Notes:
Chemical mapping of a 207-nucleotide RNA with 2A3 and DMS. 2A3 adducts were read by reverse transcription with SuperScript II with manganese. Values cover nucleotides 27 to 156. The reactions ran in a buffer of 150 mM KOAc, 10 mM MgCl2 and 150 mM bicine (pH 8.5), at 24 C. For DMS the reverse transcriptase was MarathonRT.

[RMDB]
RNA sequence: GGGAACGACUCGAGUAGAGUCGAAAAUUCCAUUUGAGUAUCCUGAAUACGGGCUUUUCAGCAUGGAACGUACAUAUUAAAUAGUAGGAGUGCAUAGUGGCCCGUAUAGCAGGCAUUAACAUUCCUGAAAACGUGAAAAGGUUCGCCUUUUCACGAACAAAUAUGAUCGCUUCGGCGAUCAUAUUUGAAAAGAAACAACAACAACAAC
Reactivity to 2A3 in 0.01 (KOAc 150mM, MgCl2 10mM, bicine 150mM(pH8.5), 24C), signal-to-noise 2, nucleotides 027 to 156: u080u000c050c010a060u220u070u120g130a100g010u030a090u110c000c010u000g000a010a010u000a000c000g000g000g000c010u090u060u010u140c040a020g000c020a030u050g000g090a190a080c020g090u030a020c000a000u170a030u200u300a130a140a130u180a080g000u020a020g030g070a120g040u000g020c050a090u100a180g090u080g010g020c000c000c000g000u000a000u000a000g020c010a000g000g020c000a000u020u020a030a000c000a010u000u160c000c000u020g030a140a100a020a010c010g010u000g000a000a000a000a000g030g030u000u050c160g110c000c000u030u000u010u000c000a000c010g000a000a000
Reactivity to DMS in 0.01 (KOAc 150mM, MgCl2 10mM, bicine 150mM(pH8.5), 24C), signal-to-noise 1, nucleotides 027 to 156: u000u010c020c000a130u020u000u000g000a160g010u000a080u000c020c010u010g010a220a100u000a060c070g000g000g050c000u000u000u050u000c030a300g030c040a020u020g020g000a110a110c080g000u010a150c070a100u010a100u000u010a120a050a240u020a130g000u000a060g000g040a130g020u000g010c000a220u010a140g020u010g030g000c010c000c020g020u000a010u000a070g010c040a020g010g080c160a020u000u000a090a040c040a070u000u010c000c030u020g010a100a120a080a170c000g040u000g000a010a000a020a000g000g000u000u010c300g020c000c000u000u000u000u000c000a000c000g010a070a080